The record gives the reactivity of an RNA of 177 nucleotides to DMS and 2A3. Reactivities are rounded to 0.1 and cut off at 0 and 3. High DMS reactivity at an A or C suggests that its Watson-Crick edge is free. The RNA was probed in 150 mM KOAc, 10 mM MgCl2 and 150 mM bicine (pH 8.5) at 24 C.
[RMDB]
RNA sequence: GGGAACGACUCGAGUAGAGUCGAAAAGAUAUGGAAUGGUUACCAGCGAGGAUCGUGUCAUUCGGAAACGAAUGCACGGGAGCUGAACCAUUCCUAAGUCAAACUUGCCAACUUCGGUUGGCAAGAACUAGCACACCAUCUUCGGAUGGUGUGCUAGAAAAGAAACAACAACAACAAC
Reactivity to DMS in 0.01 (KOAc 150mM, MgCl2 10mM, bicine 150mM(pH8.5), 24C), signal-to-noise 1, nucleotides 027 to 126: g000a010u000a020u020g000g020a050a000u000g000g010u000u010a060c300c020a010g010c000g010a090g000g040a000u020c000g010u010g010u000c030a040u000u010c000g050g010a010a000a010c030g010a010a010u000g000c000a000c020g000g000g000a010g050c000u000g000a000a000c010c000a010u050u010c000c000u000a010a080g010u000c010a170a020a190c000u000u000g000c000c000a000a010c020u000u010c210g020g010u000u010g000g000c060a000a000g000a030a190
Reactivity to 2A3 in 0.01 (KOAc 150mM, MgCl2 10mM, bicine 150mM(pH8.5), 24C), signal-to-noise 1, nucleotides 027 to 126: g000a000u000a010u010g010g020a000a000u000g010g070u050u110a150c300c100a010g000c000g030a300g060g000a010u010c010g010u000g130u180c040a050u040u000c000g040g000a010a000a010c010g020a010a010u030g000c020a010c000g010g000g000a030g000c000u020g020a020a000c000c000a000u000u010c000c000u010a010a010g000u000c000a030a070a140c010u000u010g020c010c000a000a020c010u050u120c300g160g000u050u010g000g000c060a000a000g020a010a000